[RMDB]
RNA sequence: GGGAACGACUCGAGUAGAGUCGAAAAGUGAGUCCUUACGAGGACUCACAAUAAAUUCAGCGGUAAUACGACCGCAAAUAUUACCGCUGAUGCGGUCGUAAAAGCUGCUACGUACGCGUAGCAGCAAUAGCUCACCCUAUUUCGAUAGGGUGAGCUAAAAAGAAACAACAACAACAAC
Reactivity to DMS in 0.01 (KOAc 150mM, MgCl2 10mM, bicine 150mM(pH8.5), 24C), signal-to-noise 1, nucleotides 027 to 126: g050u000g020a020g000u000c000c020u000u000a060c170g010a050g010g000a040c000u000c000a000c000a050a000u020a020a010a100u000u050c020a030g000c000g030g000u000a000a000u000a010c100g040a100c040c180g000c120a010a090a110u010a040u000u000a060c000c000g010c010u000g010a000u010g000c100g000g000u020c070g020u030a090a230a180a000g000c000u000g000c000u000a000c030g010u020a080c300g020c000g000u000a000g000c000a030g000c000a000a000
Reactivity to 2A3 in 0.01 (KOAc 150mM, MgCl2 10mM, bicine 150mM(pH8.5), 24C), signal-to-noise 2, nucleotides 027 to 126: g030u000g010a010g000u010c000c000u060u030a100c250g180a020g000g000a000c010u040c000a000c000a000a000u040a000a100a010u080u040c000a000g000c000g060g030u020a020a010u020a060c070g060a100c110c050g020c070a000a000a000u020a000u000u070a040c000c000g000c010u010g010a040u070g020c060g010g020u080c050g040u000a000a020a020a110g000c000u000g000c000u020a050c000g050u040a000c210g000c000g210u000a000g000c000a000g030c020a000a000